[RMDB]
RNA sequence: GGGAACGACUCGAGUAGAGUCGAAAAGUAUCCAGCAGCAAUGGAACUGUAUUAAAUACUACUAUGAUAGACACUGCAGCUAGAGAUACAGCUAGAGUCCUGAUUGCCAGUGCCCUGACUCUGCUGGUUGGAAUUAUACAGGUAAUGAACUUACAAGUAUAGUAUACCAAUUCGUUGGUAUACUAUAAAAAGAAACAACAACAACAAC
Reactivity to 2A3 in 0.01 (KOAc 150mM, MgCl2 10mM, bicine 150mM(pH8.5), 24C), signal-to-noise 6, nucleotides 027 to 156: g020u030a040u060c010c000a010g000c000a000g000c010a040a100u080g010g020a100a050c030u050g040u060a100u070u200a150a080a110u170a060c040u020a020c030u060a030u220g070a130u070a080g040a030c020a000c050u040g000c010a010g000c010u070a050g000a010g010a130u050a110c020a010g000c040u100a030g000a010g070u030c010c030u050g030a120u050u170g050c040c010a020g030u040g080c010c020c010u020g000a030c000u020c010u050g000c000u000g030g000u030u050g020g030a040a010u100u030a040u070a110c050a020g040g030u090a110a040u130g040a060a030c030u080u110a030c110a110a010g150
Reactivity to DMS in 0.01 (KOAc 150mM, MgCl2 10mM, bicine 150mM(pH8.5), 24C), signal-to-noise 6, nucleotides 027 to 156: g010u000a070u010c010c010a100g000c020a090g030c030a070a090u000g010g010a100a120c040u000g020u000a070u000u000a080a080a210u000a100c060u000a070c040u010a110u000g010a200u010a110g010a180c040a060c020u000g030c010a080g040c030u000a120g010a170g020a110u000a030c030a060g000c030u000a040g020a100g010u000c050c050u000g030a140u000u010g020c050c030a070g030u000g020c030c020c010u000g010a040c010u000c030u000g010c010u000g010g010u000u000g010g000a090a110u000u000a130u000a110c080a080g010g010u000a050a090u010g010a070a100c070u000u000a080c060a050a140g010